Chemical mapping of a 177-nucleotide RNA with DMS and 2A3.
RNA sequence: GGGAACGACUCGAGUAGAGUCGAAAAAUGGCUUCAGAAAAUUCCUCUGCAAUGGUUCAAGUGCACAGUCAAGGAAGGGAAGCUGCAGUGUCGCAUCUAACAACCCUUGCCACAAUCUCCACGAGUCCGUCCCUUAAGUGUUCGCACUUAAGGGACGAAAAGAAACAACAACAACAAC
Reactivity to DMS in 0.01 (KOAc 150mM, MgCl2 10mM, bicine 150mM(pH8.5), 24C), signal-to-noise 2, nucleotides 027 to 126: a060u000g000g010c070u010u000c040a100g000a100a030a080a230u000u010c000c040u000c030u000g000c010a050a030u010g050g020u000u030c080a090a120g000u000g000c020a020c030a150g000u040c100a040a100g030g000a080a020g010g000g000a030a110g000c010u000g000c120a070g010u000g000u010c040g000c020a040u020c000u010a120a230c170a110a120c010c010c030u000u000g000c040c020a010c050a100a090u000c010u000c010c000a030c000g000a100g050u010c000
Reactivity to 2A3 in 0.01 (KOAc 150mM, MgCl2 10mM, bicine 150mM(pH8.5), 24C), signal-to-noise 4, nucleotides 027 to 126: a000u120g040g000c000u030u050c030a030g170a110a110a090a100u070u010c010c000u000c010u020g040c030a010a150u040g080g120u110u140c060a140a050g050u030g030c010a020c010a040g030u040c050a040a070g030g060a030a000g050g020g000a070a030g020c020u020g020c030a050g010u010g050u180c050g030c010a020u040c020u080a070a060c020a040a060c030c000c000u020u070g060c010c000a060c030a060a050u020c010u020c020c000a070c050g030a010g100u020c020
Source information:
Reactivities are given for positions 27 through 126. The 2A3 profile rests on 2,834 reads. Source: RMDB library OK1LIB, as collected in RNAgym. Conditions: 150 mM KOAc, 10 mM MgCl2 and 150 mM bicine (pH 8.5), 24 C. 2A3 adducts were read by reverse transcription with SuperScript II with manganese.